[RMDB]
RNA sequence: GGGAACGACUCGAGUAGAGUCGAAAAUUUUGGUUUGAAUUGCUUGACAGGAUUGGUCUUGGGAACUUGCCUACUCCAUUUGAGUGGAAGUGUGGCCUGAUCACCCAUGGUGUGCCUCUCCUGGCACGAUACCACGGGUUUUCGAACCCGUGGUAUCAAAAGAAACAACAACAACAAC
Reactivity to 2A3 in 0.01 (KOAc 150mM, MgCl2 10mM, bicine 150mM(pH8.5), 24C), signal-to-noise 2, nucleotides 027 to 126: u070u090u060u080g080g050u100u010u160g090a060a090u090u110g070c070u090u110g060a010c000a020g000g000a040u010u040g010g010u050c000u090u020g000g000g010a060a020c000u010u040g010c000c000u000a000c000u010c000c010a090u100u180u300g240a250g040u050g000g050a210a270g030u090g060u040g090g030c020c000u130g050a210u100c080a100c070c000c000a030u040g100g040u100g070u080g040c000c000u000c010u000c010c000u000g000g000c020a000c070
Reactivity to DMS in 0.01 (KOAc 150mM, MgCl2 10mM, bicine 150mM(pH8.5), 24C), signal-to-noise 1, nucleotides 027 to 126: u010u010u020u020g020g000u000u000u000g030a120a080u000u010g010c070u010u000g020a100c020a030g000g000a020u000u000g000g010u000c040u000u010g000g010g010a140a090c020u000u000g000c000c000u000a010c010u000c000c010a040u010u010u000g010a200g030u000g010g000a030a070g010u010g020u000g010g010c010c020u010g000a090u000c250a120c000c000c000a000u000g010g040u000g020u020g000c000c000u000c090u010c040c000u010g000g000c050a030c240